[RMDB]
RNA sequence: GGGAACGACUCGAGUAGAGUCGAAAACGGUUACGCCUUCUUUACCGUUAUCAAGGAAGGUACUCGGCCAUGCUAAGGGAAGCAUUAUUCCUUAGGCGCAUGUCGCCGCCAGCAUGGUGUGACGGGAAAAAGUAUGCUGGGUUCGCCCAGCAUACAAGAUGACGUGAUCGUUCGCGAUCACGUCAUCAAAAGAAACAACAACAACAAC
Reactivity to 2A3 in 0.01 (KOAc 150mM, MgCl2 10mM, bicine 150mM(pH8.5), 24C), signal-to-noise 2, nucleotides 027 to 156: c000g010g030u040u050a080c110g020c010c000u000u000c000u010u030u050a040c030c040g200u130u020a020u050c070a030a000g030g020a000a000g010g010u060a090c040u020c000g030g000c000c030a020u020g020c000u080a060a060g030g000g000a010a020g010c090a150u090u130a080u220u130c000c000u000u060a070g010g000c000g000c110a210u230g090u280c040g000c040c010g000c010c030a010g000c000a030u020g050g000u050g120u070g040a000c000g010g060g070a000a080a000a000a070g010u020a000u000g000c000u000g000g010g040u010u020c070g100c060c000c010a000g000c000a000u000a000c000a000a000
This 207-nucleotide RNA was probed chemically with 2A3. The reactions ran in a buffer of 150 mM KOAc, 10 mM MgCl2 and 150 mM bicine (pH 8.5), at 24 C. The 2A3 profile rests on 1,289 reads.